[RMDB]
RNA sequence: GGGAACGACUCGAGUAGAGUCGAAAACAACAUUCGUGUUGACCGCUUCCUAAGUCGUCACGAGCGAGGGUCACACGAAGAACACCAUCGGAAACGAUGGUGGGAGUGUGCUCCUCGCGAUGAGUGACGAUAUGGAUCCUUUCGGAUUCGUCCGAAACAAAUGAAGCUAUUUCGAUAGCUUCAUUUGAAAAGAAACAACAACAACAAC
Reactivity to 2A3 in 0.01 (KOAc 150mM, MgCl2 10mM, bicine 150mM(pH8.5), 24C), signal-to-noise 7, nucleotides 027 to 156: c010a000a000c010a040u100u180c260g100u080g030u060u050g100a160c040c040g040c130u100u030c010c000u050a140a060g010u000c000g000u000c000a000c010g020a030g000c000g000a000g020g010g000u030c000a000c010a000c010g050a060a030g000a010a000c000a000c000c000a000u000c000g010g030a140a070a040c010g000a000u000g000g000u000g000g000g000a020g000u000g000u000g000c010u010c000c010u000c000g010c010g000a050u090g040a020g010u000g000a000c000g000a000u000a010u030g000g000a020u050c020c050u020u030u010c010g030g000a020u040u060c190g080u010c050c010g010a020a010a020
Reactivity to DMS in 0.01 (KOAc 150mM, MgCl2 10mM, bicine 150mM(pH8.5), 24C), signal-to-noise 3, nucleotides 027 to 156: c020a090a080c050a100u010u010c180g010u000g000u000u010g010a110c070c040g020c060u010u030c030c010u000a070a230g030u000c000g010u000c000a010c010g000a160g000c000g000a030g020g040g010u000c010a020c010a020c000g000a070a120g020a100a190c000a010c010c000a000u010c000g010g010a200a110a290c030g030a010u000g010g060u000g000g000g000a200g010u000g000u000g000c010u010c000c000u000c000g030c020g000a030u000g010a190g000u000g010a040c000g000a010u000a120u010g000g000a030u000c010c020u000u000u000c010g030g000a060u000u000c250g020u020c020c010g000a040a060a280